[RMDB]
Overview:
Structure probing data (DMS and 2A3) for a 177-nucleotide construct. The reactions ran in a buffer of 150 mM KOAc, 10 mM MgCl2 and 150 mM bicine (pH 8.5), at 24 C. The 2A3 profile rests on 1,327 reads. The data come from the RNA Mapping Database (RMDB), library OK2TST. DMS adducts were read by reverse transcription with MarathonRT. Values are in units of 0.01, from 0 to 300, in steps of 10.
RNA sequence: GGGAACGACUCGAGUAGAGUCGAAAAACGCUCAUCAUUAGAUAACAUCAAUUGUGACACUAAAUACUUCGUAAGACUCAUUUCUUUGAUACCUGCAGAUAACAUCGUCACGAUAUUAUUUGGUUUACUCCCAUACGUACUUCGGUACGUAUGGGAGAAAAGAAACAACAACAACAAC
Reactivity to DMS in 0.01 (KOAc 150mM, MgCl2 10mM, bicine 150mM(pH8.5), 24C), signal-to-noise 1, nucleotides 027 to 126: a030c130g050c050u000c070a040u000c010a050u010u010a140g000a050u000a090a050c050a300u010c050a040a070u010u000g010u000g010a090c140a050c040u010a030a010a100u000a090c070u000u010c040g020u000a100a040g020a060c070u000c080a010u040u000u000c020u010u000u000g000a070u000a100c120c070u010g000c030a000g000a010u010a010a000c070a040u010c030g010u000c140a160c100g000a050u000a100u000u000a010u000u000u000g010g010u000u000u000a120
Reactivity to 2A3 in 0.01 (KOAc 150mM, MgCl2 10mM, bicine 150mM(pH8.5), 24C), signal-to-noise 2, nucleotides 027 to 126: a010c050g000c060u020c020a140u050c000a010u040u090a010g030a090u060a100a030c020a010u050c040a040a170u050u070g040u010g000a020c000a000c070u100a010a000a120u160a020c030u070u060c050g030u110a070a000g050a050c010u020c070a080u030u120u030c070u020u060u080g080a010u080a180c020c010u010g020c000a000g020a100u010a050a060c010a020u050c020g110u100c060a020c140g020a020u020a050u050u050a030u000u050u040g050g010u050u090u000a060